[RMDB]
RNA sequence: GGGAACGACUCGAGUAGAGUCGAAAACUAAUAUGUGUAGAAUCUUCGCUUCACUCAUAUUAGCUCGUAAACAUGGCACUUGUUGUACUACAAGGGACAGAUUUUAUCGCUUGGCAAAUGAGUGUGCAACCACCCAGCUUCGGCUGGGUGAAAAGAAACAACAACAACAAC
Reactivity to 2A3 in 0.01 (KOAc 150mM, MgCl2 10mM, bicine 150mM(pH8.5), 24C), signal-to-noise 4, nucleotides 027 to 129: c000u000a000a020u000a020u020g050u000g020u070a090g030a000a000u060c050u180u200c170g050c100u040u010c010a000c000u000c000a000u000a000u020u020a000g010c030u040c050g160u180a000a120a060c040a080u050g030g020c060a020c030u010u010g000u060u050g040u080a110c050u000a020c070a000a000g040g010g090a010c050a020g070a060u030u180u070u110a040u070c030g020c120u000u000g020g000c040a040a060a060u000g000a000g010u020g000u020g100c010a010a010c020
Reactivity to DMS in 0.01 (KOAc 150mM, MgCl2 10mM, bicine 150mM(pH8.5), 24C), signal-to-noise 5, nucleotides 027 to 129: c010u010a000a060u030a010u050g020u030g020u010a120g030a000a000u030c120u120u030c290g000c170u020u040c040a100c040u030c030a030u020a020u010u030a080g040c000u030c000g000u090a090a100a060c230a060u060g020g060c040a010c040u020u080g010u000u000g030u030a070c130u000a150c050a030a040g010g010g040a070c150a100g010a080u030u010u020u090a000u030c000g030c140u040u040g030g030c050a020a060a050u020g010a020g080u030g050u050g010c050a090a050c150

An RNA of 170 nucleotides, treated with 2A3 and DMS and read out base by base. The reactions ran in a buffer of 150 mM KOAc, 10 mM MgCl2 and 150 mM bicine (pH 8.5), at 24 C. DMS adducts were read by reverse transcription with MarathonRT.